[RMDB]
Structure probing data (2A3 and DMS) for a 207-nucleotide construct. For DMS the reverse transcriptase was MarathonRT. Reactivities are given for positions 27 through 156.
RNA sequence: GGGAACGACUCGAGUAGAGUCGAAAAAUACUGUAAGCCAAUAAAACAUAACGCCAAAUACAAUAAAUGCUGUUCGAUGUACUUUCUAUGUGAUAUUUUGGCGUUAUUUUGAUUUACCAUUGCACAUCGAACAUGUUAACAGGCUAUACGGUUAUAACAUUUUAAUACUGUUCGCAGUAUUAAAAUGAAAAGAAACAACAACAACAAC
Reactivity to 2A3 in 0.01 (KOAc 150mM, MgCl2 10mM, bicine 150mM(pH8.5), 24C), signal-to-noise 4, nucleotides 027 to 156: a000u080a010c000u010g000u010a000a020g000c000c010a060a070u110a130a130a020a010c050a020u020a000a000c000g000c000c000a020a020a010u130a050c060a080a130u120a190a140a050u210g040c030u030g020u010u010c000g000a000u010g030u050a090c050u090u200u190c080u140a120u140g130u030g080a070u050a090u210u070u010u020g000g000c000g000u000u000a010u000u040u020u050g010a010u000u020u130a060c060c020a060u050u170g070c070a010c000a010u000c010g000a010a000c010a010u030g020u030u030a100a060c040a060g000g000c000u060a080u000a210c000g010g000u010u090a060u040a120a000
Reactivity to DMS in 0.01 (KOAc 150mM, MgCl2 10mM, bicine 150mM(pH8.5), 24C), signal-to-noise 4, nucleotides 027 to 156: a090u000a040c010u000g010u000a060a040g020c000c010a050a110u010a090a090a120a120c100a080u000a000a040c010g020c010c000a040a040a130u000a110c110a080a090u000a070a070a140u010g020c090u000g000u000u000c000g040a040u000g020u000a020c030u000u000u000c100u010a110u000g010u010g030a090u000a060u000u000u000u000g020g020c030g030u000u010a000u000u000u010u010g000a110u000u000u010a070c030c060a100u000u000g030c040a020c010a020u000c030g000a030a020c030a050u000g020u010u000a070a120c090a140g020g020c020u000a100u000a040c040g010g000u000u000a060u000a100a210